Chemical mapping of a 207-nucleotide RNA with 2A3. For 2A3, 512 sequencing reads were counted.
RNA sequence: GGGAACGACUCGAGUAGAGUCGAAAAGUUUGAUAGCAUACUGGGUAUCACUGCAUAUUGCCUGUGGGGAAAUGUGUCCAUUAUUUGUGGAGUGUAAAGUGGUAUAAUUUCUAUGAAAGGAUAUUGGUAGUAUCUAUCAAGUUACCAAUGCCUAUACGGGUGAUACAACGUUCGCGUUGUAUCACCCAAAAGAAACAACAACAACAAC
Reactivity to 2A3 in 0.01 (KOAc 150mM, MgCl2 10mM, bicine 150mM(pH8.5), 24C), signal-to-noise 1, nucleotides 027 to 156: g050u040u080u040g030a030u030a010g020c040a040u040a080c000u080g050g000g030u060a020u140c060a050c030u040g000c050a040u080a090u230u100g040c000c000u160g020u110g000g030g030g000a000a050a110u150g010u020g080u000c000c000a030u010u160a110u090u250u050g090u090g060g040a080g020u150g040u130a080a060a000g020u000g000g020u010a010u000a030a100u080u100u010c010u010a180u100g090a160a140a010g000g000a030u010a010u090u020g050g010u020a010g030u010a040u070c030u010a080u050c060a070a020g020u070u000a000c000c000a010a020u020g010c010c010u070a010u020a110c060

The reactions ran in a buffer of 150 mM KOAc, 10 mM MgCl2 and 150 mM bicine (pH 8.5), at 24 C.